[RMDB]
RNA sequence: GGGAACGACUCGAGUAGAGUCGAAAAGGGUAGCAGCGAGACGACGAUACGUACCCUGUCAUUUAAGUCGUCGGGCUGAUAAUGAUCAGCGAGGUACGAGCUGAUGAUAUUGCUGCUUUUUACCCAAGGGUGCAUGGUUCUUCGGGGCCGUGCACCCAAAAGAAACAACAACAACAAC
Reactivity to 2A3 in 0.01 (KOAc 150mM, MgCl2 10mM, bicine 150mM(pH8.5), 24C), signal-to-noise 9, nucleotides 027 to 126: g020g010g020u030a000g000c010a000g000c000g040a020g010a030c010g000a010c010g020a040u050a110c010g010u000a000c000c010c040u050g120u070c040a050u020u090u140a070a030g000u010c020g010u020c030g010g140g010c030u050g050a050u090a110a030u020g090a000u040c010a000g010c010g040a060g010g000u010a000c010g010a020g000c010u010g010a020u030g040a030u050a050u080u130g000c010u000g000c000u040u010u010u030u030a030c010c000c010a040a070
Reactivity to DMS in 0.01 (KOAc 150mM, MgCl2 10mM, bicine 150mM(pH8.5), 24C), signal-to-noise 9, nucleotides 027 to 126: g000g010g000u010a020g020c010a030g020c030g010a230g010a070c030g010a020c010g000a100u030a170c000g000u000a010c000c000c300u030g010u030c150a070u020u010u010a090a180g000u000c000g000u010c060g000g000g010c020u000g000a080u040a060a020u000g000a010u000c020a010g000c060g000a120g000g010u010a010c000g000a220g000c010u010g010a020u000g010a030u010a070u020u020g010c000u000g010c000u010u010u010u010u010a110c010c000c010a110a150